Notes: Chemical mapping of a 207-nucleotide RNA with 2A3 and DMS. It was measured as part of the RMDB library M2RFPK. The reactions ran in a buffer of 150 mM KOAc, 10 mM MgCl2 and 150 mM bicine (pH 8.5), at 24 C. For 2A3, 6,710 sequencing reads were counted. As a SHAPE reagent, 2A3 marks flexible, mostly unpaired nucleotides at the ribose 2'-OH.

[RMDB]
RNA sequence: GGGAACGACUCGAGUAGAGUCGAAAAACGGAUGGUACGCCAUCCGACCAUUGGGUAGAAGCGUUCAAUCAGCACCGUGACGGUGCAGAUGGGAAAUUGACCAUGAUACGCACCAUACGUGGUGCGAAAAAGCCAUCGGUGUUCGCACCGAUGGCAAUCACUAUUGAUAGUUCGCUAUCAAUAGUGAAAAAGAAACAACAACAACAAC
Reactivity to 2A3 in 0.01 (KOAc 150mM, MgCl2 10mM, bicine 150mM(pH8.5), 24C), signal-to-noise 7, nucleotides 027 to 156: a000c010g000g000a000u000g000g000u060a040c190g030c050c000a000u000c000c000g010a000c010c000a090u090u180g080g020g020u130a070g050a160a020g060c040g070u040u030c050a070a080u020c020a030g010c000a010c010c010g120u160g200a120c220g010g000u000g000c020a000g000a010u030g030g020g060a000a080a100u090u090g060a030c010c020a030u070g040a050u090a060c030g000c010a000c010c000a010u030a080c250g080u040g000g000u010g010c000g010a020a020a000a020a000g000c000c000a000u000c000g000g000u030g030u040u080c170g040c070a000c000c000g000a000u000g000g000c000a000a000
Reactivity to DMS in 0.01 (KOAc 150mM, MgCl2 10mM, bicine 150mM(pH8.5), 24C), signal-to-noise 3, nucleotides 027 to 156: a120c050g010g000a030u000g000g050u010a070c300g060c030c000a010u000c000c010g040a050c040c020a290u000u000g010g010g020u010a080g010a070a070g000c090g020u000u000c030a070a080u000c020a120g040c010a010c000c000g020u020g020a170c120g030g030u000g020c000a020g020a030u010g010g010g000a040a070a100u000u010g000a070c010c020a060u000g010a190u000a110c020g030c020a030c010c020a100u000a080c220g040u000g020g030u010g000c010g000a000a030a060a100a050g020c000c010a040u000c000g010g050u000g010u000u010c290g030c020a050c000c000g040a010u000g000g010c000a010a000